An RNA of 177 nucleotides, treated with 2A3 and DMS and read out base by base.
For 2A3 the reverse transcriptase was SuperScript II with manganese.
For 2A3, 2,303 sequencing reads were counted.
DMS adducts were read by reverse transcription with MarathonRT.
Source: RMDB library TTRDEL, as collected in RNAgym.
For DMS, 1,148 sequencing reads were counted.

[RMDB]
RNA sequence: GGGAACGACUCGAGUAGAGUCGAAAAGAUAUGGACGCUGUCGACAUGCUUUACGCGAGCCUCGGAAACGAGGCUCAAAGCAACAGCGAGCAGCGUCCUAAGUCAAACAAUGGGUUCGCCCAUUGAAGAUCUCACUUUACUUCGGUAAAGUGAGAUCAAAAGAAACAACAACAACAAC
Reactivity to 2A3 in 0.01 (KOAc 150mM, MgCl2 10mM, bicine 150mM(pH8.5), 24C), signal-to-noise 2, nucleotides 027 to 126: g030a050u040a040u070g010g000a000c000g000c030u020g020u110c030g090a300c070a110u250g010c000u120u170u150a110c160g060c140g170a010g020c030c000u000c010g000g060a070a040a030c010g040a010g140g000c000u000c000a000a010a000g000c010a000a090c040a110g080c030g000a040g050c000a000g010c000g020u000c000c000u010a010a000g010u020c000a040a040a010c010a000a000u010g000g000g070u050u070c260g180c050c000c000a000u000u000g000a070a020
Reactivity to DMS in 0.01 (KOAc 150mM, MgCl2 10mM, bicine 150mM(pH8.5), 24C), signal-to-noise 2, nucleotides 027 to 126: g020a060u000a300u000g010g040a000c010g020c000u000g000u000c030g000a100c110a200u000g010c010u010u000u010a130c110g050c300g000a020g010c000c000u000c000g000g020a120a050a240c020g000a000g010g000c000u000c000a000a030a050g010c000a060a100c270a080g010c000g000a150g020c020a000g020c010g010u000c000c000u000a010a030g020u000c020a100a070a130c010a000a000u010g000g010g000u010u000c270g000c030c010c000a000u000u000g000a100a070